[RMDB]
This 177-nucleotide RNA was probed chemically with DMS and 2A3.
Conditions: 150 mM KOAc, 10 mM MgCl2 and 150 mM bicine (pH 8.5), 24 C.
The data come from the RNA Mapping Database (RMDB), library OK1LIB.
For DMS, 20,926 sequencing reads were counted.
The 2A3 profile rests on 4,896 reads.
RNA sequence: GGGAACGACUCGAGUAGAGUCGAAAAUGCAGAAGGGUCUCCUAACUCUGGCAGUCGGUAAACCUAUCGGCGCUGAAGGAUUCAAGUGGCUGAAGGUCCACGGUGCAAACUGCGCUGGUGUAGAUAAGUUGGAUGUAUCUUUCGAGAUACAUCCAACAAAAGAAACAACAACAACAAC
Reactivity to DMS in 0.01 (KOAc 150mM, MgCl2 10mM, bicine 150mM(pH8.5), 24C), signal-to-noise 7, nucleotides 027 to 126: u020g000c030a080g000a060a030g010g000g000u010c030u000c020c020u000a110a070c030u000c000u000g000g010c050a050g010u000c030g000g010u020a090a130a060c080c060u010a070u000c020g010g010c010g010c030u010g010a110a120g020g000a130u020u000c070a080a080g000u000g010g010c020u010g020a110a070g010g010u010c030c050a090c030g000g010u010g000c070a080a080a130c100u010g010c020g020c030u010g010g020u010g000u010a050g010a100u030a070a170
Reactivity to 2A3 in 0.01 (KOAc 150mM, MgCl2 10mM, bicine 150mM(pH8.5), 24C), signal-to-noise 6, nucleotides 027 to 126: u200g030c030a010g030a130a060g050g030g040u020c020u020c050c010u050a080a030c010u010c000u030g050g030c030a040g020u050c020g030g030u080a070a090a110c030c000u050a110u100c010g020g000c010g000c000u030g060a100a050g110g030a050u080u070c090a170a030g010u010g050g030c020u040g060a080a000g060g020u020c020c010a040c020g010g010u050g000c020a060a050a120c060u060g010c010g000c010u060g010g050u090g020u050a090g030a200u100a140a080